[RMDB]
RNA sequence: GGGAACGACUCGAGUAGAGUCGAAAAGAUAUGGAUCCAUGGCUUCUUUUGACGCAGAUACCCUCGGAAACGAGGGUGCUGCGAUAAGAAGCAUGGAUCCUAAGUCAAAGGCGUGUUCGCACGCCAACCAUGUACUGUAGUUCGCUACAGUACAUGGAAAAGAAACAACAACAACAAC
Reactivity to 2A3 in 0.01 (KOAc 150mM, MgCl2 10mM, bicine 150mM(pH8.5), 24C), signal-to-noise 9, nucleotides 027 to 126: g040a020u090a040u190g000g000a000u010c010c010a050u040g300g050c020u020u000c020u070u180u110u220g260a170c040g000c010a020g120a200u140a070c000c000c000u000c010g030g030a100a080a060c020g000a010g000g000g000u000g000c000u010g000c000g000a000u010a010a000g000a000a000g000c000a000u000g010g000a000u000c000c000u000a010a010g020u010c050a110a080a080g010g000c020g000u020g040u090u190c300g010c130a000c000g000c000c000a000a010
Reactivity to DMS in 0.01 (KOAc 150mM, MgCl2 10mM, bicine 150mM(pH8.5), 24C), signal-to-noise 8, nucleotides 027 to 126: g000a040u000a300u010g010g000a000u000c000c000a010u000g020g010c000u000u000c010u000u010u010u010g010a270c130g020c000a010g000a100u000a000c000c000c000u000c000g010g010a130a080a220c010g010a020g010g000g010u000g010c000u000g010c000g010a060u000a010a010g010a020a010g010c000a000u000g000g000a000u000c000c000u000a010a070g000u000c050a080a140a140g000g010c000g030u000g010u010u020c230g020c010a010c010g010c000c000a040a080